RNA sequence: GGGAACGACUCGAGUAGAGUCGAAAAGAGAUGACAGCGCGGUUUUUGAGGACGUCUUUUGUCCGUGCGGUACCGCCCUCCUUGGUCGGCUCCGCCUACUCGGCGGUCGGCAGUGGAGAGGAAUCAAACUUUACUCCCUCUUCGGAGGGAGUAAAGUAAAAGAAACAACAACAACAAC
Reactivity to DMS in 0.01 (KOAc 150mM, MgCl2 10mM, bicine 150mM(pH8.5), 24C), signal-to-noise 4, nucleotides 027 to 126: g000a130g030a110u010g000a100c060a090g020c040g000c000g000g000u010u020u000u030u010g010a100g010g040a030c140g010u020c070u000u000u010u010g010u000c000c010g020u010g000c130g020g000u010a060c030c000g000c010c010c000u000c010c010u020u090g010g020u000c000g010g010c090u040c050c030g010c000c000u010a100c220u060c120g020g010c000g000g010u010c010g000g000c000a020g000u010g000g000a020g010a110g000g030a090a050u020c170a110a100
Reactivity to 2A3 in 0.01 (KOAc 150mM, MgCl2 10mM, bicine 150mM(pH8.5), 24C), signal-to-noise 3, nucleotides 027 to 126: g020a000g020a060u150g020a030c060a070g000c000g000c020g060g000u010u020u040u060u060g050a130g050g070a110c080g120u130c060u090u060u030u030g040u000c000c010g000u000g010c000g030g040u080a070c010c020g000c000c000c000u000c000c010u040u070g070g000u020c000g020g020c070u060c080c030g000c000c020u160a300c200u150c160g000g000c000g000g000u000c000g010g000c010a010g020u030g020g030a020g030a130g040g010a010a000u100c100a080a040